[RMDB]
Structure probing data (DMS and 2A3) for a 177-nucleotide construct.
Source: RMDB library OK2TST, as collected in RNAgym.
RNA sequence: GGGAACGACUCGAGUAGAGUCGAAAAUGGAUGGGGUUUGAUGGCAGAUAUUGACAUUGACAGUGAGAAAUGGAGAAAAUCGCUUGGCCAUCACAGAUUCACUGUUAUGGGAUUCAUUCGCAGCUGAAUCAUACGCCUACUUCGGUAGGCGUAUGAUAAAAGAAACAACAACAACAAC
Reactivity to DMS in 0.01 (KOAc 150mM, MgCl2 10mM, bicine 150mM(pH8.5), 24C), signal-to-noise 2, nucleotides 027 to 126: u010g000g000a050u000g000g000g020g000u000u030u000g030a150u000g010g010c030a150g020a080u010a050u000u010g010a150c110a030u010u030g020a100c030a040g000u000g020a050g000a090a090a120u010g000g000a140g000a070a040a100a090u010c120g000c160u000u010g010g000c010c020a010u010c050a110c220a050g000a130u010u000c020a030c020u010g010u010u000a060u000g000g030g000a110u010u000c040a110u010u000c160g030c080a100g000c070u000g050a080
Reactivity to 2A3 in 0.01 (KOAc 150mM, MgCl2 10mM, bicine 150mM(pH8.5), 24C), signal-to-noise 1, nucleotides 027 to 126: u060g020g020a060u000g060g000g020g040u000u030u060g060a030u040g020g020c000a010g060a120u110a060u200u160g010a030c000a050u040u100g050a020c000a000g070u050g060a110g140a090a150a080u110g030g000a060g040a120a050a010a050u070c030g000c210u050u130g100g000c000c010a020u050c000a010c010a010g100a040u000u110c000a000c030u010g000u080u000a050u090g000g020g080a000u140u140c030a050u100u050c070g000c050a050g000c100u040g030a020
For DMS, 1,223 sequencing reads were counted. The RNA was probed in 150 mM KOAc, 10 mM MgCl2 and 150 mM bicine (pH 8.5) at 24 C.